[RMDB]
Conditions: 150 mM KOAc, 10 mM MgCl2 and 150 mM bicine (pH 8.5), 24 C. Chemical mapping of a 170-nucleotide RNA with 2A3 and DMS. Reactivities are given for positions 27 through 129. For 2A3 the reverse transcriptase was SuperScript II with manganese. DMS adducts were read by reverse transcription with MarathonRT.
RNA sequence: GGGAACGACUCGAGUAGAGUCGAAAAGGACGGGAAAAGCACAUCCAGAGGACCCCUUCGACGAACAGAAGGAUCUGGUACCGGGGAGGAAUAGCCCAUAGUACAAGGGGAGAUGCUAGGAGUCAGGAACGGGAUGGGUUCGCCCAUCCCAAAAGAAACAACAACAACAAC
Reactivity to 2A3 in 0.01 (KOAc 150mM, MgCl2 10mM, bicine 150mM(pH8.5), 24C), signal-to-noise 3, nucleotides 027 to 129: g000g000a010c000g020g000g010a080a120a010a000g080c060a030c010a090u040c040c010a000g000a010g010g040a060c030c000c010c000u050u050c020g070a080c010g050a110a010c040a120g020a040a010g040g010a030u000c010u020g000g010u040a050c010c020g000g000g020g020a010g000g000a030a010u010a060g000c010c010c000a040u040a030g080u110a020c050a030a020g000g010g040g000a000g010a020u030g020c020u040a030g020g000a000g030u050c020a000g020g000a020a010c090
Reactivity to DMS in 0.01 (KOAc 150mM, MgCl2 10mM, bicine 150mM(pH8.5), 24C), signal-to-noise 4, nucleotides 027 to 129: g000g000a080c090g000g000g050a010a040a010a040g020c190a150c230a030u020c030c070a090g030a100g020g050a200c220c130c010c020u000u000c020g060a100c120g040a070a050c000a060g010a060a050g030g000a110u030c000u000g040g030u030a110c180c050g000g010g060g010a090g030g030a000a040u030a150g000c040c030c040a030u030a010g020u050a060c130a050a060g080g000g050g000a040g010a090u050g040c090u050a110g000g040a020g000u050c080a070g010g030a040a070c000

For DMS, 7,078 sequencing reads were counted.